Chemical mapping of a 177-nucleotide RNA with DMS. For DMS, 1,293 sequencing reads were counted. The data come from the RNA Mapping Database (RMDB), library TTRDES.
RNA sequence: GGGAACGACUCGAGUAGAGUCGAAAAGAUAUGGACCGUGGGCGCUCGAUAAGCUGGUAUCGGAAACGAUAUGCAGCUUUUGACGAGCGUCCACGGUCCUAAGUCAAAACCAGCGUUCGCGCUGGAACACGACAGUUAGGUUCGCCUAACUGUCGUGAAAAGAAACAACAACAACAAC
Reactivity to DMS in 0.01 (KOAc 150mM, MgCl2 10mM, bicine 150mM(pH8.5), 24C), signal-to-noise 2, nucleotides 027 to 126: g000a060u000a300u000g000g000a000c000c000g040u000g010g020g010c000g030c010u000c010g020a160u000a040a030g020c010u010g000g000u000a020u010c020g020g000a170a050a260c000g050a020u010a000u010g020c060a000g020c010u000u000u000u000g020a210c100g010a000g030c000g040u000c000c000a000c000g010g000u000c000c000u000a000a040g020u010c060a120a080a190a140c000c000a020g000c000g020u000u010c260g000c000g050c060u020g000g010a070a130